Description
The record gives the reactivity of an RNA of 177 nucleotides to 2A3 and DMS.
RNA sequence: GGGAACGACUCGAGUAGAGUCGAAAAUCAAGGUACUAUUUCUGGAGUCAUGUUAGCUGUAGAACAAUAUGAAAAUUUGCUUGAUAGGGAGAAACAACAUACAACAGAGUAUGGUGAAUAUGAACAACAUACUAGUGGGGUUCGCCCCACUAGUAUGAAAAGAAACAACAACAACAAC
Reactivity to 2A3 in 0.01 (KOAc 150mM, MgCl2 10mM, bicine 150mM(pH8.5), 24C), signal-to-noise 2, nucleotides 027 to 126: u050c010a000a040g110g020u070a050c020u060a050u060u060u020c050u070g010g000a010g020u040c040a050u030g000u080u020a000g020c050u050g030u130a000g010a060a020c040a050a040u060a040u140g110a010a010a030a060u050u050u060g040c020u040u040g050a040u030a060g110g040g020a040g070a040a070a010c020a000a000c000a030u110a010c030a080a010c000a070g030a010g080u030a010u030g000g010u030g030a010a060u190a100u150g050a050a020c010a000a010
Reactivity to DMS in 0.01 (KOAc 150mM, MgCl2 10mM, bicine 150mM(pH8.5), 24C), signal-to-noise 4, nucleotides 027 to 126: u010c050a060a090g010g010u000a050c050u000a050u000u000u000c040u020g030g010a240g010u000c130a030u000g020u000u000a060g010c070u000g010u010a100g030a050a030c060a060a050u000a070u010g000a080a060a090a070u010u000u010g020c040u010u000g010a110u020a080g010g010g010a100g000a120a110a120c090a030a040c040a040u000a030c060a050a170c120a040g000a050g020u000a010u000g010g010u010g000a070a060u010a070u000g000a070a080c120a070a150
For 2A3 the reverse transcriptase was SuperScript II with manganese.